[RMDB]
RNA sequence: GGGAACGACUCGAGUAGAGUCGAAAACGGGGGAUUAGGGUUUGAUUUCGGAGAGGGAGCAUGAGAGAUGGCUACCACAUCUAAGGAAGGCAGCAGGCGCGCAAAUUACCUAUCCCUGACUCAGGGAAUAGACGAGCGAAUUCGUUCGCUCGUCUAUAAAAGAAACAACAACAACAAC
Reactivity to DMS in 0.01 (KOAc 150mM, MgCl2 10mM, bicine 150mM(pH8.5), 24C), signal-to-noise 2, nucleotides 027 to 126: c090g000g030g010g000g030a090u000u000a010g050g000g010u010u000u020g020a140u000u030u020c020g010g010a140g000a110g000g010g030a040g010c100a070u010g010a140g010a140g020a060u020g050g020c030u010a120c070c070a160c070a050u000c030u000a050a080g020g020a030a090g000g030c070a120g010c050a080g000g000c050g010c070g020c000a010a020a040u030u030a130c000c000u000a090u010c000c000c000u000g030a120c090u080c030a100g000g000g000a140
Reactivity to 2A3 in 0.01 (KOAc 150mM, MgCl2 10mM, bicine 150mM(pH8.5), 24C), signal-to-noise 2, nucleotides 027 to 126: c000g000g000g000g000g030a070u030u220a070g020g040g000u010u080u100g130a190u000u070u170c050g000g040a010g000a020g080g000g000a040g000c020a060u040g070a020g040a000g000a070u070g050g090c000u000a060c000c020a030c000a020u000c000u010a030a030g070g000a060a030g010g090c020a000g000c020a000g040g000c010g000c000g010c130a010a050a050u130u140a060c000c000u050a080u080c000c050c010u110g130a170c010u100c090a000g020g000g000a010

This 177-nucleotide RNA was probed chemically with DMS and 2A3. Reactivities are given for positions 27 through 126. For 2A3, 1,147 sequencing reads were counted. Source: RMDB library RFM100, as collected in RNAgym. The RNA was probed in 150 mM KOAc, 10 mM MgCl2 and 150 mM bicine (pH 8.5) at 24 C. DMS adducts were read by reverse transcription with MarathonRT.